[RMDB]
The record gives the reactivity of an RNA of 177 nucleotides to 2A3 and DMS.
RNA sequence: GGGAACGACUCGAGUAGAGUCGAAAAGAUCUCUUCAUCAAUAUUCUCAUCAUCUCCGCAGAUUGCACUUUGGCCUAAUAGAAGAUGGGUCAAUUCAUGGAAGAGGGAAAAUAUCCUUCCAUUUACAAUAGUGAGUAUUAUUCGUAAUACUCACUAUAAAAGAAACAACAACAACAAC
Reactivity to 2A3 in 0.01 (KOAc 150mM, MgCl2 10mM, bicine 150mM(pH8.5), 24C), signal-to-noise 9, nucleotides 027 to 126: g060a050u020c020u010c000u090u050c030a090u030c030a060a110u080a140u210u040c040u000c010a080u020c010a040u020c040u020c040c040g030c040a040g080a230u070u200g050c040a040c110u050u020u060g010g000c000c010u100a170a130u140a190g160a200a010g060a090u100g010g000g000u000c000a010a070u120u090c040a020u030g040g040a020a010g100a140g090g050g070a040a150a040a020u240a080u080c000c000u030u000c020c010a050u090u120u060a120c110a090
Reactivity to DMS in 0.01 (KOAc 150mM, MgCl2 10mM, bicine 150mM(pH8.5), 24C), signal-to-noise 8, nucleotides 027 to 126: g000a160u010c010u000c000u010u000c030a100u010c100a060a060u020a120u010u020c010u000c010a060u020c030a060u000c020u000c050c040g020c060a080g000a060u010u010g000c100a080c080u000u000u000g010g020c060c030u000a060a110u010a100g020a080a100g000a090u010g010g010g000u000c040a030a020u010u020c140a040u010g010g000a000a040g000a080g000g010g010a090a070a080a110u030a120u020c020c000u000u010c040c040a070u020u030u020a060c210a070
DMS adducts were read by reverse transcription with MarathonRT. Values cover nucleotides 27 to 126.